RNA sequence: GGGAACGACUCGAGUAGAGUCGAAAAGAUAUGGAAUAUGCGUGGGAGAAGCUAUCGGAAACGAUAGGACUUCAUCGAUCACGUCAUAUUCCUAAGUCAAAGGGUUGCGAGUUCGCUCGCAACCCAACCGUACUUUAUGGUUCGCCAUAAAGUACGGAAAAGAAACAACAACAACAAC
Reactivity to 2A3 in 0.01 (KOAc 150mM, MgCl2 10mM, bicine 150mM(pH8.5), 24C), signal-to-noise 4, nucleotides 027 to 126: g020a000u020a020u080g000g000a000a010u000a000u020g020c010g050u040g050g300g050a180g010a040a010g030c010u000a000u010c010g020g020a040a030a020c010g020a010u000a010g060g120a080c000u030u010c020a140u290c150g240a230u280c010a000c010g070u060c030a000u010a000u020u000c000c000u000a020a000g010u010c040a040a120a150g020g000g010u010u000g000c000g010a010g000u070u150c280g060c170u000c000g000c000a000a010c010c000c000a000a000
Reactivity to DMS in 0.01 (KOAc 150mM, MgCl2 10mM, bicine 150mM(pH8.5), 24C), signal-to-noise 3, nucleotides 027 to 126: g000a030u000a200u020g000g000a020a000u000a000u030g030c000g020u010g020g020g010a140g010a040a020g000c010u000a000u010c000g030g010a050a050a120c000g030a020u000a010g000g010a140c000u010u010c000a270u010c280g010a180u000c000a010c000g000u020c020a020u010a020u000u000c000c010u010a000a080g000u000c030a080a150a180g010g000g010u000u000g010c000g030a000g040u000u010c300g020c000u010c010g000c000a000a000c000c000c000a000a010